[RMDB]
RNA sequence: GGGAACGACUCGAGUAGAGUCGAAAAAGGAGGCUGAGGCAGAAGAAUCGCUUGAACCCGUGAGAUGGAGGUUGCAGUGAGCCAAAAUCAUGCCACUGCACUCCAGCCUGGGUGAGAGAGAGACUCCAUCUCAAACACAAAAAAGAAAAAAGAAAAACAGUAAAAUAAAUUUCGAUUUAUUUUACUGAAAAGAAACAACAACAACAAC
Reactivity to 2A3 in 0.01 (KOAc 150mM, MgCl2 10mM, bicine 150mM(pH8.5), 24C), signal-to-noise 1, nucleotides 027 to 156: a000g010g010a000g010g000c020u040g010a040g110g070c070a010g010a120a010g000a120a000u010c050g020c070u000u000g040a020a010c000c000c020g080u060g010a210g000a040u040g030g000a010g000g020u260u140g000c000a000g010u000g040a140g000c000c000a200a020a020a050u300c120a070u160g000c000c000a000c000u000g000c000a000c010u000c000c000a000g030c000c000u000g000g020g000u000g000a010g000a000g010a000g000a010g000a010c010u000c050c000a030u020c010u000c060a050a170a060c020a000c040a130a010a020a000a050a010g060a040a050a070a300a030a070g270a030a100a300a000a000

Conditions: 150 mM KOAc, 10 mM MgCl2 and 150 mM bicine (pH 8.5), 24 C. Structure probing data (2A3) for a 207-nucleotide construct. 2A3 adducts were read by reverse transcription with SuperScript II with manganese. The data come from the RNA Mapping Database (RMDB), library OK3TST. For 2A3, 557 sequencing reads were counted.